[RMDB]
RNA sequence: GGGAACGACUCGAGUAGAGUCGAAAAGCACGAGUGAGCUUAGACUCGUGCGGGCUCAGUUAGUGCAAACUGAGCCGGGUCUAGUUUAAGCUCACUGGACCGCGUAGAGUUUGCACUAACUCUGCGAGGACAGCAUACUAUUCGUAGUAUGCUGUCCAAAAGAAACAACAACAACAAC
Reactivity to 2A3 in 0.01 (KOAc 150mM, MgCl2 10mM, bicine 150mM(pH8.5), 24C), signal-to-noise 4, nucleotides 027 to 126: g020c010a010c090g040a010g010u040g020a020g040c060u100u120a050g040a070c010u010c040g000u030g090c010g000g010g010c010u020c020a000g000u000u010a020g020u020g070c030a020a020a000c000u020g010a010g010c000c000g020g020g000u010c020u020a020g010u000u030u090a110a040g020c030u020c010a010c000u010g000g030a010c010c010g140c030g070u010a040g010a010g170u000u020u040g010c040a000c010u010a000a000c000u020c020u040g020c030g040a060
Reactivity to DMS in 0.01 (KOAc 150mM, MgCl2 10mM, bicine 150mM(pH8.5), 24C), signal-to-noise 4, nucleotides 027 to 126: g040c080a050c090g010a030g020u000g000a050g010c110u010u010a050g010a020c000u000c210g020u000g020c010g000g000g010c000u010c050a010g010u000u000a010g010u000g010c050a000a010a010c000u010g000a150g010c100c010g010g020g020u010c040u000a030g010u000u010u000a040a080g000c110u000c090a030c000u000g010g000a110c020c010g000c030g020u000a080g000a040g000u000u000u000g010c050a030c030u000a020a010c000u000c030u000g000c020g010a170